Conditions: 150 mM KOAc, 10 mM MgCl2 and 150 mM bicine (pH 8.5), 24 C. Structure probing data (DMS) for a 177-nucleotide construct. Source: RMDB library TTRINS, as collected in RNAgym. DMS adducts were read by reverse transcription with MarathonRT.

RNA sequence: GGGAACGACUCGAGUAGAGUCGAAAAGAUAUGGACUUAAGGGAGGGUUUAGGCCCUAGCUAAGACAGCAAUUCGGAAACGAAUUGUCGAGCUAGGGCCUAUACCCGACGAUCUUAAGUCCUAAGUCCUUACGUGAUUUGUUCGCAAAUCACGUAAGAAAAGAAACAACAACAACAAC
Reactivity to DMS in 0.01 (KOAc 150mM, MgCl2 10mM, bicine 150mM(pH8.5), 24C), signal-to-noise 2, nucleotides 027 to 126: g000a110u000a300u000g010g000a020c000u010u000a000a000g010g010g000a030g050g020g010u000u000u000a000g000g020c000c000c000u000a000g020c000u010a250a110g000a100c300a140g000c060a000a020u010u000c000g000g000a160a070a300c010g010a000a040u000u010g010u000c000g000a020g000c010u000a000g020g000g010c000c010u000a000u000a020c000c000c000g010a010c300g000a020u020c000u000u000a000a000g020u000c000c000u000a000a110g000u010c020